[RMDB]
The record gives the reactivity of an RNA of 177 nucleotides to 2A3 and DMS.
It was measured as part of the RMDB library RFMREP.
Reactivities are rounded to 0.1 and cut off at 0 and 3.
For DMS the reverse transcriptase was MarathonRT.
For 2A3, 7,631 sequencing reads were counted.
RNA sequence: GGGAACGACUCGAGUAGAGUCGAAAAGCGUACACAUCUUGCCUAUGGCAUUUCCCUGGACGUAAGCGGUGACCGCAAGGUAGCAACCUGGAGUUAGCUCGGCUGUGAGUACGUGCACGGAAAGCAGCAUCAAAGAUGAGUUCGCUCAUCUUUGAUGAAAAGAAACAACAACAACAAC
Reactivity to 2A3 in 0.01 (KOAc 150mM, MgCl2 10mM, bicine 150mM(pH8.5), 24C), signal-to-noise 4, nucleotides 027 to 126: g000c020g020u090a010c050a000c010a080u050c030u100u110g030c010c020u190a170u190g050g000c040a020u010u030u030c010c010c000u000g020g040a020c030g040u060a060a060g020c020g050g110u090g060a080c000c030g030c060a030a020g060g010u030a030g040c020a040a030c000c020u040g060g000a130g050u070u070a020g030c000u020c060g060g000c010u010g010u010g020a010g020u000a020c030g010u070g110c090a050c060g020g020a030a030a000g020c020a000g010
Reactivity to DMS in 0.01 (KOAc 150mM, MgCl2 10mM, bicine 150mM(pH8.5), 24C), signal-to-noise 7, nucleotides 027 to 126: g000c050g020u010a050c070a090c080a070u010c070u000u010g030c020c030u000a120u010g020g010c030a070u010u000u000c020c000c010u010g020g010a070c070g020u000a080a070g000c050g010g020u000g010a090c040c030g020c160a090a070g010g010u000a100g000c100a060a090c030c020u000g000g010a100g010u000u000a100g010c030u000c100g000g010c010u010g000u000g010a070g020u000a040c030g010u000g000c130a080c080g010g000a070a090a230g010c050a060g010